[RMDB]
RNA sequence: GGGAACGACUCGAGUAGAGUCGAAAACCUGGCGACCUGAAGUUGGGGAUGAAAACACCAGGCUGGUGGCUCUGCAGAAACUGGACGAUGAAAUGCCAGGCUUUGCCAGAGGUGACGCUGGCGUCCGACCAUUCUGCUCCUUCGGGAGCAGAAUGGUAAAAGAAACAACAACAACAAC
Reactivity to DMS in 0.01 (KOAc 150mM, MgCl2 10mM, bicine 150mM(pH8.5), 24C), signal-to-noise 1, nucleotides 027 to 126: c020c000u010g000g000c010g020a260c050c020u000g000a050a090g030u020u020g020g000g010g030a150u000g000a050a110a170a140c090a100c050c040a010g020g010c010u130g020g040u000g010g010c010u000c000u000g000c070a020g000a060a070a080c050u000g010g000a060c080g000a140u020g000a070a080a110u000g000c010c010a020g020g000c120u000u000u000g000c040c030a050g000a080g030g010u000g010a130c140g000c000u000g000g000c010g070u000c020c110g000